[RMDB]
RNA sequence: GGGAACGACUCGAGUAGAGUCGAAAACAACUGUUAUCUUGCCACUGCAUUGUUAACACUCCAACAAAGAGAGUUGAAGUUUAAUCCACCUGCUCUACAAAGGGCUGGUGAAGCUGCUAACUUUUGUAACCAUUGAUGUUCGCAUCAAUGAAAAGAAACAACAACAACAAC
Reactivity to 2A3 in 0.01 (KOAc 150mM, MgCl2 10mM, bicine 150mM(pH8.5), 24C), signal-to-noise 9, nucleotides 027 to 129: c020a000a020c030u020g020u080u030a100u080c060u060u130g040c020c060a130c090u120g010c040a040u050u080g040u050u050a040a010c020a020c040u000c020c020a050a040c050a070a270a020g130a010g000a010g030u020u050g070a040a010g000u030u070u180a040a050u070c020c000a000c000c000u030g010c000u010c000u050a140c100a070a240a080g000g000g000c000u010g000g000u000g000a010a010g000c020u040g010c010u020a020a020c000u030u030u030u050g080u060a050a040c030
Reactivity to DMS in 0.01 (KOAc 150mM, MgCl2 10mM, bicine 150mM(pH8.5), 24C), signal-to-noise 9, nucleotides 027 to 129: c070a080a050c160u050g010u010u030a050u030c010u020u030g010c030c140a110c180u050g010c040a030u000u010g000u000u010a030a040c070a070c090u050c000c060a030a050c170a070a090a100g000a070g020a040g010u020u020g020a070a040g030u020u000u060a080a110u060c090c010a000c000c000u020g000c000u020c000u030a120c300a100a140a070g030g010g020c020u020g000g030u020g010a030a050g000c030u000g030c080u010a010a020c010u010u010u010u020g000u020a040a070c190